[RMDB]
RNA sequence: GGGAACGACUCGAGUAGAGUCGAAAACGAAGCUGGAUAGGCUUCGAUGUUGAGGGUGCUCAUGCUUCCCGUAAUGCAUGUGGCACCAAUGUGCCUCUACAAUUAGGAUUUUCAACUGGUGUGAACUCUCUAAGAUACCGUUCGCGGUAUCUUAGAGAAAAGAAACAACAACAACAAC
Reactivity to 2A3 in 0.01 (KOAc 150mM, MgCl2 10mM, bicine 150mM(pH8.5), 24C), signal-to-noise 1, nucleotides 027 to 126: c010g000a010a000g020c030u040g080g160a250u150a270g030g010c010u010u000c000g000a060u130g060u070u080g040a060g000g010g040u000g010c000u010c000a000u020g020c000u040u020c110c010c040g070u240a060a070u210g000c010a000u000g000u070g030g010c000a000c010c000a000a000u050g000u070g010c000c000u030c050u050a080c060a050a020u130u080a110g000g070a070u040u030u050u060c070a130a030c080u070g090g000u060g010u020g100a020a010c010u010
Reactivity to DMS in 0.01 (KOAc 150mM, MgCl2 10mM, bicine 150mM(pH8.5), 24C), signal-to-noise 1, nucleotides 027 to 126: c010g010a010a000g010c010u000g000g030a230u000a120g000g000c000u000u000c020g000a070u000g000u000u000g010a140g010g020g000u020g000c030u000c020a010u000g010c000u000u000c010c020c050g000u000a110a090u010g040c020a030u000g010u010g000g040c020a000c000c040a050a040u000g030u000g040c020c000u000c070u000a070c160a110a110u000u000a060g000g000a120u000u000u010u000c060a030a090c070u010g000g040u000g000u000g000a070a030c140u000